Structure probing data (2A3 and DMS) for a 207-nucleotide construct. The data come from the RNA Mapping Database (RMDB), library OK3TST. The reactions ran in a buffer of 150 mM KOAc, 10 mM MgCl2 and 150 mM bicine (pH 8.5), at 24 C.
RNA sequence: GGGAACGACUCGAGUAGAGUCGAAAAUAUGCGGCGCAUCUCAUCAUCCGUGUCUGCCGACUUUGAAGACAUGAAUUCGGUACUGGAAGAGUAUAAGAGUAAAUACAUCAAGAGAGAAAUAUCCGAGGUUGCAGCCGCGUCUGUACGUCCUGCAGGACAACACAAGACUAUUCGUAGUCUUGUGUUGAAAAGAAACAACAACAACAAC
Reactivity to 2A3 in 0.01 (KOAc 150mM, MgCl2 10mM, bicine 150mM(pH8.5), 24C), signal-to-noise 9, nucleotides 027 to 156: u290a090u140g000c000g000g000c000g000c000a010u000c010u020c040a140u030c010a030u020c040c010g050u020g040u070c050u050g060c040c040g050a090c090u120u090u140g120a110a050g070a030c030a070u120g070a080a060u060u020c020g030g010u040a040c020u060g030g030a070a030g030a060g060u050a040u040a110a080g070a020g070u140a080a130a070u090a050c060a120u070c080a120a020g030a000g010a000g060a130a130a030u140a070u060c060c060g010a010g030g020u050u100g010c040a040g000c010c010g000c000g000u000c000u010g030u020a030c070g030u010c010c000u010g010c020a020g020g030a020
Reactivity to DMS in 0.01 (KOAc 150mM, MgCl2 10mM, bicine 150mM(pH8.5), 24C), signal-to-noise 5, nucleotides 027 to 156: u000a050u000g000c020g010g030c030g010c050a050u000c030u010c030a160u000c070a100u000c020c020g050u000g000u000c010u000g020c050c050g010a120c150u000u000u030g000a120a060g010a050c030a050u010g010a040a070u000u000c050g020g020u000a070c030u000g020g020a160a120g000a130g030u010a050u000a070a120g020a170g000u000a060a110a090u000a080c050a100u000c060a080a150g010a170g010a160g010a070a060a110u000a070u000c050c060g010a090g010g000u000u000g020c000a090g030c020c010g010c020g010u010c010u010g030u000a070c040g010u000c010c030u000g010c040a080g010g010a200